Structure probing data (DMS and 2A3) for a 177-nucleotide construct. The data come from the RNA Mapping Database (RMDB), libraries RFM100 and RFMREP. The RNA was probed in 150 mM KOAc, 10 mM MgCl2 and 150 mM bicine (pH 8.5) at 24 C. DMS adducts were read by reverse transcription with MarathonRT. Reactivities are rounded to 0.1 and cut off at 0 and 3.
RNA sequence: GGGAACGACUCGAGUAGAGUCGAAAAUCAACAAGGGGUGCGGAUCUCAGUCCACAGAUUAUCUCGAUGAUCGUAUCGACGAUAUUCACCUUCUUGCUGGCGGGCCUUUCGAGGUCCGUUUUCUCAGGCCCUUCUGUAGAUUCGUCUACAGAAGGGCAAAAGAAACAACAACAACAAC
Reactivity to DMS in 0.01 (KOAc 150mM, MgCl2 10mM, bicine 150mM(pH8.5), 24C), signal-to-noise 2, nucleotides 027 to 126: u060c040a000a070c020a010a010g010g000g000g020u000g010c300g000g010a020u010c140u030c300a170g010u000c000c030a090c170a110g020a000u000u020a000u000c010u000c040g000a000u000g000a120u040c160g010u040a010u010c060g000a030c250g000a030u000a010u000u030c050a070c010c010u000u020c010u000u000g010c060u000g000g010c000g010g010g000c000c000u000u010u020c160g000a030g000g010u000c000c060g030u000u000u000u000c010u000c010a150g000
Reactivity to 2A3 in 0.01 (KOAc 150mM, MgCl2 10mM, bicine 150mM(pH8.5), 24C), signal-to-noise 7, nucleotides 027 to 126: u090c000a000a040c000a010a010g010g010g000g010u040g030c070g030g040a030u040c120u040c170a080g070u020c020c010a060c030a040g060a060u070u010a010u020c020u000c020g030a030u030g070a140u170c110g100u290a010u020c000g020a030c080g010a010u010a030u040u050c000a020c010c000u210u290c000u020u090g010c010u000g040g000c000g010g000g000c000c000u040u070u090c200g040a010g000g000u010c000c000g010u010u000u010u010c000u000c000a020g140